[RMDB]
RNA sequence: GGGAACGACUCGAGUAGAGUCGAAAAAGAUUGGCGAUGUUACCGCCCAGAUCCCGCCUGGGGUUCAUGUUGUGCAGGACCACCAGCACGGUGUAUCCGGUGCACUUGGGGAAUUUAUCAUGCAACUUGGAAGGGAAGGCGUGAAAGAAUUUGGCGAGGAUCUAACAGUCUUCGGACUGUUAGAUCCAAAAGAAACAACAACAACAAC
Reactivity to 2A3 in 0.01 (KOAc 150mM, MgCl2 10mM, bicine 150mM(pH8.5), 24C), signal-to-noise 2, nucleotides 027 to 156: a000g130a080u130u120g000g020c060g010a020u110g070u230u100a070c060c030g040c030c030c000a010g010a120u030c010c010c000g000c030c030u020g000g030g000g000u020u050c080a070u120g120u200u010g010u080g010c000a010g000g030a000c000c010a030c010c000a030g140c100a050c120g010g020u010g000u040a050u020c000c010g030g160u080g000c000a000c000u050u060g010g000g000g000a020a010u090u100u050a160u160c040a030u030g010c020a050a070c060u030u030g000g080a040a020g040g010g000a010a020g010g000c030g000u050g020a060a040a040g030a030a090u120u050u040g040g040c070g010a090
This 207-nucleotide RNA was probed chemically with 2A3. Conditions: 150 mM KOAc, 10 mM MgCl2 and 150 mM bicine (pH 8.5), 24 C. Reactivities are given for positions 27 through 156. For 2A3, 1,229 sequencing reads were counted.